[RMDB]
RNA sequence: GGGAACGACUCGAGUAGAGUCGAAAAGCUUGUAGCUUCGGCUACAAGCAUCUAAAAUCAGCGGUAAAUAAUUACGAGGCGUUACCCCUGAACGCCUCGAUACAACCACAUCAUUCGUGAUGUGGAAACAACCUAUAGUCUUCGGACUAUAGGUUGUAAAAGAAACAACAACAACAAC
Reactivity to 2A3 in 0.01 (KOAc 150mM, MgCl2 10mM, bicine 150mM(pH8.5), 24C), signal-to-noise 4, nucleotides 027 to 126: g010c000u000u000g000u000a010g000c000u040u030c250g130g020c000u000a000c000a010a010g020c010a000u020c010u060a060a050a020a060u060c020a030g080c040g190g100u160a090a120a110u150a110a200u240u160a110c010g000a000g010g000c000g010u010u040a130c000c000c010c030u020g020a010a000c000g000c000c000u000c000g000a010u000a010c010a050a090c010c000a000c000a000u020c010a000u030u140c150g090u060g000a000u000g000u000g010g000a010a020
Reactivity to DMS in 0.01 (KOAc 150mM, MgCl2 10mM, bicine 150mM(pH8.5), 24C), signal-to-noise 3, nucleotides 027 to 126: g010c010u000u000g000u000a000g000c000u000u020c190g020g010c000u000a010c010a000a000g010c000a020u000c050u000a070a070a090a110u010c040a030g010c080g010g000u010a070a100a100u000a090a100u010u000a090c020g010a010g000g020c000g020u000u000a090c040c020c000c030u010g020a040a010c000g010c010c010u010c000g010a030u000a030c230a110a110c000c000a000c000a000u000c000a020u000u010c220g010u000g000a010u000g000u000g000g000a030a050
An RNA of 177 nucleotides, treated with 2A3 and DMS and read out base by base.
The 2A3 profile rests on 4,404 reads.
For 2A3 the reverse transcriptase was SuperScript II with manganese.
Source: RMDB library M2PK50, as collected in RNAgym.